[RMDB]
RNA sequence: GGGAACGACUCGAGUAGAGUCGAAAACGUGCGUACUGGGCCGCCGGCACAAUGUUCCACCCAGCCGUCUCAGAGGCCGCGGUUCGACCACGAUCAGCCAGCCGGUCAGCGGGGUCCUCCUAGCUAGCGCUAUACCUACGUUCGCGUAGGUAUAGCGAAAAGAAACAACAACAACAAC
Reactivity to DMS in 0.01 (KOAc 150mM, MgCl2 10mM, bicine 150mM(pH8.5), 24C), signal-to-noise 1, nucleotides 027 to 126: c050g030u010g000c130g050u000a120c010u030g020g000g020c060c010g010c070c100g010g010c040a060c060a150a090u010g000u010u000c060c060a120c040c050c010a110g000c080c030g000u010c080u000c130a070g000a250g000g000c050c020g030c050g000g000u000u000c060g010a020c020c040a070c120g030a120u010c070a100g020c010c010a060g000c060c080g000g000u010c040a080g040c070g030g010g000g000u010c010c050u000c040c060u000a070g000c110u000a180g000

This 177-nucleotide RNA was probed chemically with DMS.
High DMS reactivity at an A or C suggests that its Watson-Crick edge is free.
Values cover nucleotides 27 to 126.
Source: RMDB library OK2TRN, as collected in RNAgym.